[RMDB]
RNA sequence: GGGAACGACUCGAGUAGAGUCGAAAAUGACUGUUGGGCCCUAGCAUCCCCAACAGUCUAAUGAUGUAGUGGUGUGGAGUACGCGAGAGCGUACUCAGCAUCCGAGAGGAUGCGAUUCCGACCCACAUUAUUGCAUCUAAUGGUCGGAAGCUAGGGAGAGUCCUAAUACUUUCGAGUAUUAGGACUCAAAAGAAACAACAACAACAAC
Reactivity to 2A3 in 0.01 (KOAc 150mM, MgCl2 10mM, bicine 150mM(pH8.5), 24C), signal-to-noise 2, nucleotides 027 to 156: u100g000a000c000u020g000u000u000g010g000g020c010c000c020u010a010g010c020a180u300c010c000c010c000a000a000c000a000g000u000c000u000a010a030u050g020a000u020g000u010a010g010u000g010g000u020g000u010g020g010a010g010u020a000c000g000c020g000a040g010a000g070c000g000u010a000c000u010c020a000g000c000a000u010c010c000g040a040g010a010g030g000a000u000g000c010g010a070u160u100c050c090g050a060c020c000c000a010c000a000u000u030a010u020u020g000c010a010u000c000u040a050a060u200g140g000u050c040g100g030a030a000g010c000u000a000g000g000g020a060
Reactivity to DMS in 0.01 (KOAc 150mM, MgCl2 10mM, bicine 150mM(pH8.5), 24C), signal-to-noise 1, nucleotides 027 to 156: u010g020a020c040u000g020u010u010g020g040g030c040c000c000u000a050g010c020a060u000c120c000c010c000a010a000c010a020g050u000c000u000a040a040u010g030a020u000g020u020a020g060u000g000g040u000g020u000g000g020a040g010u000a010c000g050c010g010a300g000a300g000c000g040u010a010c000u000c000a090g040c030a000u000c000c000g000a300g000a300g030g000a060u000g000c020g000a140u000u000c040c010g000a100c000c000c040a100c020a030u000u000a000u000u000g010c020a030u000c080u000a110a140u030g000g030u000c000g010g020a150a050g000c010u000a060g000g010g020a190